This 177-nucleotide RNA was probed chemically with DMS and 2A3. The DMS profile rests on 6,867 reads. The reactions ran in a buffer of 150 mM KOAc, 10 mM MgCl2 and 150 mM bicine (pH 8.5), at 24 C. For 2A3 the reverse transcriptase was SuperScript II with manganese.
RNA sequence: GGGAACGACUCGAGUAGAGUCGAAAAACAAAGAAGGAUAGGCAUGAGGUCGAGAGAAGCAUAGAGUAACAAAAGGAAACGGUGUCGACAGGCGAGAGGAGACAAGACGGUCGAUAGACUCGCAGUGCAGUAAAUGCGGUUUCGACCGCAUUUACUGAAAAGAAACAACAACAACAAC
Reactivity to DMS in 0.01 (KOAc 150mM, MgCl2 10mM, bicine 150mM(pH8.5), 24C), signal-to-noise 4, nucleotides 027 to 126: a080c100a080a060a050g020a110a050g010g020a060u010a050g010g020c050a050u020g000a040g000g010u010c030g020a050g000a090g010a040a060g000c100a080u020a080g000a100g010u000a070a070c160a030a010a090a100g000g000a050a080a060c100g000g000u000g030u000c060g000a080c090a040g010g010c070g000a020g000a050g000g000a200g000a040c070a020a060g010a070c190g010g020u010c010g000a150u010a110g000a060c010u010c020g010c030a040g000u010g000
Reactivity to 2A3 in 0.01 (KOAc 150mM, MgCl2 10mM, bicine 150mM(pH8.5), 24C), signal-to-noise 5, nucleotides 027 to 126: a000c150a010a120a010g140a050a030g080g020a030u100a100g020g000c060a040u040g030a040g000g050u020c030g010a010g000a010g020a110a000g050c050a070u080a050g100a040g090u090a140a010c070a050a100a000a020g060g030a030a090a020c070g020g040u040g030u020c010g020a030c000a030g020g080c030g010a050g000a020g030g060a070g010a040c030a030a050g110a040c110g070g000u050c020g020a040u050a110g080a020c020u000c010g010c040a020g070u100g100